[RMDB]
RNA sequence: GGGAACGACUCGAGUAGAGUCGAAAAAGAUCCACGCUACGGCGUGGAUCACACGUUCAUCCCUAUUGGGACGGAAGUAGGCAUAGUGCCGAAGGAACGCAUUAGUCAUGCGCUACGGCGCAUGACAGAGACCACAACGAUUCGUCGUUGUGGUCUCAAAAGAAACAACAACAACAAC
Reactivity to 2A3 in 0.01 (KOAc 150mM, MgCl2 10mM, bicine 150mM(pH8.5), 24C), signal-to-noise 5, nucleotides 027 to 126: a000g000a000u000c020c000a000c000g010c000u030a030c280g140g000c000g000u000g010g000a000u010c000a000c000a000c010g010u000u010c000a030u010c030c000c000u120a300u110u300g010g000g010a010c020g000g010a010a030g010u020a010g000g020c050a110u120a190g160u230g250c000c000g000a000a000g040g010a030a010c020g000c040a080u060u140a030g000u000c000a000u010g000c010g010c000u020a030c280g120g000c000g000c000a000u000g000a000c000a000
Reactivity to DMS in 0.01 (KOAc 150mM, MgCl2 10mM, bicine 150mM(pH8.5), 24C), signal-to-noise 2, nucleotides 027 to 126: a020g010a000u000c000c000a000c000g010c000u000a210c080g050g000c000g050u000g100g020a010u000c020a060c210a070c050g000u000u030c000a300u000c000c000c000u000a070u030u060g010g000g010a030c050g000g000a050a070g010u000a030g000g010c000a160u060a010g010u000g010c020c000g000a200a150g000g000a010a080c000g020c030a080u060u000a110g030u000c010a000u000g010c000g030c020u000a050c130g010g000c000g000c000a000u000g010a020c000a040
Structure probing data (2A3 and DMS) for a 177-nucleotide construct. The data come from the RNA Mapping Database (RMDB), libraries RFM100 and RFMREP. Reactivities are given for positions 27 through 126. The reactions ran in a buffer of 150 mM KOAc, 10 mM MgCl2 and 150 mM bicine (pH 8.5), at 24 C. 2A3 adducts were read by reverse transcription with SuperScript II with manganese.